[RMDB]
RNA sequence: GGGAACGACUCGAGUAGAGUCGAAAAGUCUUCACCGUGGAGGUGGACAAAUUGAAAGCUGGCUUUGGAGCUACAUUAGAAGCGGGAGCGGUGGCCUUCAAAGGCAAACGUGAUGAGUUCAGCUUAUCGGACGGAUGAUCCAUUACCACGGUCCGAACCGACGUAUACGGUUCGCCGUAUACGUCGGAAAAGAAACAACAACAACAAC
Reactivity to 2A3 in 0.01 (KOAc 150mM, MgCl2 10mM, bicine 150mM(pH8.5), 24C), signal-to-noise 3, nucleotides 027 to 156: g070u000c050u140u160c070a010c010c000g000u010g010g000a180g000g060u020g000g010a040c040a000a160a060u180u220g010a030a010a000g010c010u000g000g000c010u000u080u100g040g020a060g000c020u050a030c040a210u200u230a080g050a300a000g030c000g040g100g070a100g020c030g110g000u080g030g030c000c020u130u210c110a260a160a000g000g000c000a090a080a000c020g040u080g060a110u190g030a050g010u280u300c000a000g000c000u020u050a210u120c030g030g020a010c050g050g060a040u050g040a020u030c000c000a000u040u050a130c000c020a010c000g040g000u020c010c010g020a080a040
Source: RMDB library OK3TST, as collected in RNAgym. Structure probing data (2A3) for a 207-nucleotide construct. The RNA was probed in 150 mM KOAc, 10 mM MgCl2 and 150 mM bicine (pH 8.5) at 24 C. 2A3 adducts were read by reverse transcription with SuperScript II with manganese.